Structure probing data (2A3 and DMS) for a 177-nucleotide construct. The reactions ran in a buffer of 150 mM KOAc, 10 mM MgCl2 and 150 mM bicine (pH 8.5), at 24 C. It was measured as part of the RMDB library RFMREP. Values cover nucleotides 27 to 126. The 2A3 profile rests on 1,195 reads.
RNA sequence: GGGAACGACUCGAGUAGAGUCGAAAACGAUGUUAUGAUGAUGGGCGAAAUGUUCAACUGCUCUGAAGGGGCUGAAUGAAAAUGGCCUUUCUGAACAUCCAAACGUUAGAUACUUCGGUAUCUAACGGAGCCUAAAAUCGUUCGCGAUUUUAGGCUCAAAAGAAACAACAACAACAAC
Reactivity to 2A3 in 0.01 (KOAc 150mM, MgCl2 10mM, bicine 150mM(pH8.5), 24C), signal-to-noise 1, nucleotides 027 to 126: c050g000a000u030g000u040u070a130u220g070a020u030g000a030u050g020g000g000c030g050a190a010a010u110g040u020u040c030a030a030c060u030g030c000u000c020u120g300a190a080g060g000g000g000c000u010g100a190a150u020g010a010a050a030a020u060g040g010c030c000u000u030u000c010u020g020a020a000c000a000u000c020c030a080a130a010c000g000u000u000a000g000a000u000a000c000u000u030c150g060g000u000a000u000c020u000a000a000c010g030
Reactivity to DMS in 0.01 (KOAc 150mM, MgCl2 10mM, bicine 150mM(pH8.5), 24C), signal-to-noise 1, nucleotides 027 to 126: c080g000a010u000g030u010u000a260u000g010a030u000g000a050u000g020g000g000c000g020a100a170a100u030g000u000u000c000a000a170c030u000g000c030u000c000u040g030a140a160g000g000g000g020c010u010g000a050a140u010g000a050a030a050a100u010g110g000c010c010u000u000u000c020u000g010a040a010c030a010u020c000c260a000a040a300c000g000u000u000a030g020a000u000a000c000u010u000c140g040g030u000a000u000c000u000a010a000c020g000